[RMDB]
Chemical mapping of a 207-nucleotide RNA with 2A3. For 2A3, 629 sequencing reads were counted. The RNA was probed in 150 mM KOAc, 10 mM MgCl2 and 150 mM bicine (pH 8.5) at 24 C.
RNA sequence: GGGAACGACUCGAGUAGAGUCGAAAAAAGAGGUUCUCUGUUCUCUAAAAUAAAAACAGAGUGGUGGAGUCAUUAUGACCCUCUUAGAGUUUCCAGUUUCUCUAAAAAACUGGUGGCGAGCCUGCUCAAAAUCAUUAGACCUUCGGGUCUAAUGAAACCCAAGAUGAUAGUUCGCUAUCAUCUUGGGAAAAGAAACAACAACAACAAC
Reactivity to 2A3 in 0.01 (KOAc 150mM, MgCl2 10mM, bicine 150mM(pH8.5), 24C), signal-to-noise 1, nucleotides 027 to 156: a000a000g030a010g020g000u040u010c000u010c010u000g010u050u000c000u000c000u010a070a300a190a150u080a030a010a090a020a000c000a000g020a000g000u020g040g010u060g020g100a250g050u000c000a050u060u300a100u300g000a000c000c020c010u020c020u050u130a020g000a000g030u030u000u000c000c000a010g000u000u020u030c000u030c020u080a040a000a000a000a000a070c000u000g000g000u010g020g000c020g010a030g070c050c070u140g010c050u040c120a030a080a040a040u020c000a000u000u000a000g000a000c000c020u030u010c200g040g010g000u000c000u000a000a000u000g000a000a000a000